Description: Structure probing data (2A3) for a 207-nucleotide construct. The reactions ran in a buffer of 150 mM KOAc, 10 mM MgCl2 and 150 mM bicine (pH 8.5), at 24 C. For 2A3, 2,350 sequencing reads were counted. 2A3 adducts were read by reverse transcription with SuperScript II with manganese. Reactivities are rounded to 0.1 and cut off at 0 and 3. Source: RMDB library RNAMAK, as collected in RNAgym.
RNA sequence: GGGAACGACUCGAGUAGAGUCGAAAAGGGGUCACACCGUUGAUCGCUCCUUGUCAGCUGUGUGCUGAAGCCUCCACGGCACAACAGCUUGGAUUUAGGAGCGGGAGGUGUGACGGAGGCACCCAAAUCGACAAACCGUUUCGACGGUUUGUCGAAAUCUAUGAAGAGUCUUCGGACUCUUCAUAGAAAAAGAAACAACAACAACAAC
Reactivity to 2A3 in 0.01 (KOAc 150mM, MgCl2 10mM, bicine 150mM(pH8.5), 24C), signal-to-noise 2, nucleotides 027 to 156: g040g000g050g030u010c010a000c000a000c000c000g130u130u020g010a000u000c000g000c010u000c000c010u040u040g180u140c110a040g000c010u000g000u000g000u000g000c010u020g030a100a050g000c010c000u010c010c000a030c030g010g030c000a000c010a210a270c000a070g030c030u090u200g140g010a040u100u090u140a020g000g000a010g020c010g010g010g000a000g000g010u000g000u000g010a000c000g000g000a000g000g030c010a020c000c010c000a050a040a060u060c010g000a000c000a010a000a000c000c000g020u060u090u170c220g110a020c000g010g000u000u010u000g010u000c000g000a000a000a000